Structure probing data (2A3 and DMS) for a 177-nucleotide construct. For DMS, 1,852 sequencing reads were counted.
RNA sequence: GGGAACGACUCGAGUAGAGUCGAAAAUCGAAUGGGCUGUUUCCUCGUCGGGAUGUCAAUUUCUCGAUGCUUUCAUAUUCAAGGAGUCUGGAAAACUUCAUUGGAAGCCUUUUGUCAAGACAGGAAAAUGUUAGCGUCUUUUCGAAGACGCUAACAUAAAAGAAACAACAACAACAAC
Reactivity to 2A3 in 0.01 (KOAc 150mM, MgCl2 10mM, bicine 150mM(pH8.5), 24C), signal-to-noise 3, nucleotides 027 to 126: u100c040g040a030a060u070g020g000g000c000u030g000u050u030u000c000c000u020c050g010u000c000g010g000g020a040u030g120u190c110a130a130u050u120u000c020u010c010g040a020u030g000c000u000u030u040c080a110u040a070u170u120c030a050a020g040g000a000g040u000c030u080g160g070a050a090a010a000c000u030u010c040a300u040u060g020g020a020a010g010c010c000u010u120u080u050g140u060c050a070a030g030a090c010a080g050g060a050a090a030
Reactivity to DMS in 0.01 (KOAc 150mM, MgCl2 10mM, bicine 150mM(pH8.5), 24C), signal-to-noise 2, nucleotides 027 to 126: u000c070g020a080a050u000g000g000g000c000u010g040u000u000u010c000c000u030c040g030u000c060g000g030g000a040u010g050u000c250a090a170u030u040u000c060u000c000g030a050u020g000c120u000u000u060c050a060u000a010u000u040c170a080a080g020g000a040g000u010c010u040g050g000a030a090a150a060c000u000u000c010a240u030u020g010g000a020a070g010c000c060u000u000u000u000g000u040c110a070a130g010a040c140a050g000g010a010a050a130